The record gives the reactivity of an RNA of 177 nucleotides to DMS and 2A3. The RNA was probed in 150 mM KOAc, 10 mM MgCl2 and 150 mM bicine (pH 8.5) at 24 C. For DMS, 1,457 sequencing reads were counted. DMS adducts were read by reverse transcription with MarathonRT. For 2A3 the reverse transcriptase was SuperScript II with manganese.

[RMDB]
RNA sequence: GGGAACGACUCGAGUAGAGUCGAAAAGAUAUGGAAGUGCCCUUCGCAGAUACCUGGAGAAAUCGGAAACGAUUUCUUCCAGGAGUAGAAGAGCACUUCCUAAGUCAGGGAGCACUUCGGUGCUCAACCAUGUAUCGCUCUUCGGAGCGAUACAUGGAAAAGAAACAACAACAACAAC
Reactivity to DMS in 0.01 (KOAc 150mM, MgCl2 10mM, bicine 150mM(pH8.5), 24C), signal-to-noise 2, nucleotides 027 to 126: g020a010u010a300u000g010g000a010a000g010u000g020c000c000c010u000u010c010g000c140a210g000a070u000a020c000c000u000g020g000a050g010a020a010a010u000c000g000g010a130a130a240c010g000a030u000u000u000c000u000u010c000c000a010g000g020a070g000u000a040g020a040a010g000a030g000c000a000c000u000u000c000c000u000a000a070g020u000c010a160g000g040g010a020g020c020a000c000u020u000c260g030g020u000g000c020u000c010a040a140
Reactivity to 2A3 in 0.01 (KOAc 150mM, MgCl2 10mM, bicine 150mM(pH8.5), 24C), signal-to-noise 1, nucleotides 027 to 126: g020a030u040a030u130g000g010a020a010g010u010g010c010c010c010u010u000c020g000c040a010g030a200u110a080c000c010u010g000g010a000g080a000a000a010u010c000g000g010a070a080a050c000g000a010u000u060u020c000u120u060c010c010a000g000g000a000g000u060a020g020a010a000g020a000g010c010a000c000u010u000c000c000u000a010a000g000u010c030a010g180g220g000a010g000c040a000c010u060u070c250g270g000u020g000c010u020c010a010a030